An RNA of 177 nucleotides, treated with DMS and 2A3 and read out base by base.
DMS adducts were read by reverse transcription with MarathonRT.
[RMDB]
RNA sequence: GGGAACGACUCGAGUAGAGUCGAAAAGAUAUGGACGGGCAAGGGAGCGAAAUUUCGGAAACGAAAUGUCGCAUCGAUCUUGCCGUCCUAAGUCAAAAUCAUCUUCCGACUUCGGUCGGAAGAUGAACUUGAACUAUAGGUUCGCCUAUAGUUCAAGAAAAGAAACAACAACAACAAC
Reactivity to DMS in 0.01 (KOAc 150mM, MgCl2 10mM, bicine 150mM(pH8.5), 24C), signal-to-noise 5, nucleotides 027 to 126: g000a020u000a040u010g000g000a020c000g010g010g010c000a010a010g010g010g010a030g030c000g010a050a070a040u000u000u000c000g010g000a020a020a040c000g010a010a000a000u000g000u000c000g030c000a300u000c240g000a060u000c000u000u000g000c000c000g010u000c000c000u000a000a050g000u000c010a120a100a130a130u000c000a000u000c000u000u000c000c000g010a020c000u000u010c240g030g010u000c000g010g000a000a000g010a000u000g010a010a080
Reactivity to 2A3 in 0.01 (KOAc 150mM, MgCl2 10mM, bicine 150mM(pH8.5), 24C), signal-to-noise 4, nucleotides 027 to 126: g000a000u010a010u060g010g000a010c090g090g130g150c010a000a010g040g020g010a080g020c000g010a100a070a040u000u010u010c010g010g000a000a010a000c000g010a000a010a010u080g050u080c020g000c010a070u300c050g030a030u000c000u010u010g000c010c000g000u000c010c000u000a010a000g000u000c020a030a040a030a280u050c000a000u000c000u000u000c010c000g000a010c010u040u050c300g160g010u000c000g000g020a010a000g000a000u000g000a000a000